The record gives the reactivity of an RNA of 177 nucleotides to DMS and 2A3.
Values cover nucleotides 27 to 126.
The reactions ran in a buffer of 150 mM KOAc, 10 mM MgCl2 and 150 mM bicine (pH 8.5), at 24 C.
For DMS, 1,157 sequencing reads were counted.
DMS adducts were read by reverse transcription with MarathonRT.
It was measured as part of the RMDB library OK2TRN.
[RMDB]
RNA sequence: GGGAACGACUCGAGUAGAGUCGAAAACAGACACCACUCAGGUGUCUCUGCAUAUUGAUGAGGAAGACUCAAUAGUUGAUGCUAUCCAUUUACCUAACGACUUCAUCACAUGCGACCACGAGCACGCGUGUUACGGAUACUUCGGUAUCCGUAACACAAAAGAAACAACAACAACAAC
Reactivity to DMS in 0.01 (KOAc 150mM, MgCl2 10mM, bicine 150mM(pH8.5), 24C), signal-to-noise 2, nucleotides 027 to 126: c150a010g000a020c010a030c020c000a140c160u010c170a300g000g010u000g000u000c000u000c080u020g000c040a000u000a070u000u010g020a050u000g030a070g030g000a070a130g030a210c210u030c090a040a080u000a070g010u000u020g000a030u000g030c200u000a090u010c200c040a050u000u000u000a070c100c040u010a060a080c140g000a140c020u000u000c010a020u000c000a080c220a080u000g030c030g010a160c050c020a070c110g000a030g020c200a040c180g050c230
Reactivity to 2A3 in 0.01 (KOAc 150mM, MgCl2 10mM, bicine 150mM(pH8.5), 24C), signal-to-noise 2, nucleotides 027 to 126: c010a000g020a000c000a010c000c000a050c070u220c080a080g000g050u000g020u000c000u030c000u030g000c010a010u080a060u090u170g010a060u020g010a010g030g030a080a030g050a040c030u000c220a070a120u060a040g050u010u090g040a050u060g000c070u090a110u050c060c010a070u030u060u080a050c040c020u030a110a050c010g030a030c010u010u010c000a010u000c000a000c000a040u010g050c000g030a050c010c010a050c090g050a050g030c080a010c080g060c030